Chemical mapping of a 170-nucleotide RNA with 2A3 and DMS. The data come from the RNA Mapping Database (RMDB), library 15KLIB. For DMS the reverse transcriptase was MarathonRT.
[RMDB]
RNA sequence: GGGAACGACUCGAGUAGAGUCGAAAAAACGCCCGAGCCGGGAUGGGCCGCAUACCGAGCGAAGGAUACCGGUAAGGGGAGAGGAGGAAUCCCGAGGGGAUCGCCCACUAAAGAGUAGAGGAAUUCUAAACGAUGAUCUUCGGAUCAUCGAAAAGAAACAACAACAACAAC
Reactivity to 2A3 in 0.01 (KOAc 150mM, MgCl2 10mM, bicine 150mM(pH8.5), 24C), signal-to-noise 4, nucleotides 027 to 129: a000a000c050g050c000c000c020g010a020g030c000c000g000g000g020a050u040g010g010g020c000c000g040c030a050u090a070c030c040g040a020g030c050g030a060a000g040g030a040u080a080c000c010g020g010u050a070a070g020g010g000g000a020g010a020g010g000a010g000g000a020a000u020c010c030c020g000a020g000g010g000g010a000u040c030g020c000c000c000a040c000u110a080a120a030g080a020g050u080a010g020a040g050g040a050a060u070u010c040u070a110a030a050
Reactivity to DMS in 0.01 (KOAc 150mM, MgCl2 10mM, bicine 150mM(pH8.5), 24C), signal-to-noise 6, nucleotides 027 to 129: a010a010c190g020c010c000c000g060a200g040c000c040g040g020g020a010u030g010g020g040c090c040g070c110a100u040a150c100c060g020a070g010c010g030a070a150g020g000a070u060a070c040c040g000g000u050a080a100g020g000g010g000a020g010a040g020g000a050g000g000a050a060u010c050c020c060g000a100g040g000g010g040a000u010c120g020c010c030c040a070c100u060a080a070a040g010a070g030u000a070g020a110g020g010a020a080u050u010c080u030a070a100a150